Source: RMDB library OK1LIB, as collected in RNAgym.
Structure probing data (2A3 and DMS) for a 177-nucleotide construct.
2A3 adducts were read by reverse transcription with SuperScript II with manganese.
The reactions ran in a buffer of 150 mM KOAc, 10 mM MgCl2 and 150 mM bicine (pH 8.5), at 24 C.
The DMS profile rests on 47,793 reads.
[RMDB]
RNA sequence: GGGAACGACUCGAGUAGAGUCGAAAAUUGCGCCUGUGUCUUGUGCGACUCUUCCGUUGCUGCUGGGGAAGCUGAGAGACGGAUCAGAUCGACCGUCAGGAUACACUCUCGGCUGGUUCGUGUGCGGCGAAAAUUUAAAUUUCGAUUUAAAUUUUCGAAAAGAAACAACAACAACAAC
Reactivity to 2A3 in 0.01 (KOAc 150mM, MgCl2 10mM, bicine 150mM(pH8.5), 24C), signal-to-noise 9, nucleotides 027 to 126: u100u120g020c020g030c020c010u040g010u010g020u040c020u060u110g040u050g070c020g080a080c010u010c010u090u010c020c020g050u040u080g030c020u000g000c010u040g010g020g010g060a050a020g000c020u020g020a050g000a010g020a070c010g050g020a120u020c000a050g140a290u130c050g030a030c010c000g030u030c020a020g080g010a040u060a120c070a040c030u000c000u010c010g010g000c020u010g050g030u040u020c030g010u050g030u030g050c030g020g000
Reactivity to DMS in 0.01 (KOAc 150mM, MgCl2 10mM, bicine 150mM(pH8.5), 24C), signal-to-noise 9, nucleotides 027 to 126: u030u020g010c050g020c020c010u010g010u010g010u010c030u000u010g000u020g020c070g000a100c050u010c050u010u010c040c030g020u010u010g010c010u000g000c010u010g010g010g000g010a080a030g010c000u010g000a040g000a070g010a060c070g000g000a090u010c030a100g010a090u030c130g000a080c070c050g000u010c050a110g000g010a080u010a060c110a180c080u010c010u000c010g000g010c000u010g010g020u010u010c050g020u010g010u010g010c040g000g010